[RMDB]
RNA sequence: GGGAACGACUCGAGUAGAGUCGAAAAGACACCGAUGUCGAUCAAAUUGCAGCAAACUGUAUGCCCCUUAUGGAGUCAUUAGUCACCGGUGUUUCUGAGCAGCAUGUGGGGCAGAUGAUGCAGGUCGACGUUCGUAAUCCUUCGGGAUUACGAACGUAAAAGAAACAACAACAACAAC
Reactivity to DMS in 0.01 (KOAc 150mM, MgCl2 10mM, bicine 150mM(pH8.5), 24C), signal-to-noise 1, nucleotides 027 to 126: g000a040c060a120c080c030g000a020u000g020u000c010g000a000u010c090a010a120a120u050u000g020c040a030g030c170a080a100a100c130u010g000u000a110u000g010c060c000c000c000u000u030a090u030g000g000a010g000u020c110a090u040u000a020g040u000c050a080c010c010g020g000u020g020u000u010u000c000u000g010a030g020c110a060g000c000a000u020g010u000g000g000g000g090c000a010g000a040u000g020a010u000g010c000a020g000g020u000c040g000
Reactivity to 2A3 in 0.01 (KOAc 150mM, MgCl2 10mM, bicine 150mM(pH8.5), 24C), signal-to-noise 2, nucleotides 027 to 126: g080a040c080a050c030c010g010a090u050g000u010c020g020a020u010c060a100a160a080u170u060g060c040a100g000c000a000a050a120c010u010g070u080a030u050g000c000c000c000c000u090u060a000u160g030g080a060g060u060c040a110u080u120a030g050u050c030a040c140c040g180g020u040g050u020u030u000c050u020g000a010g040c070a000g020c000a000u020g040u070g030g030g000g000c010a000g000a090u100g000a010u050g000c030a000g000g000u000c030g020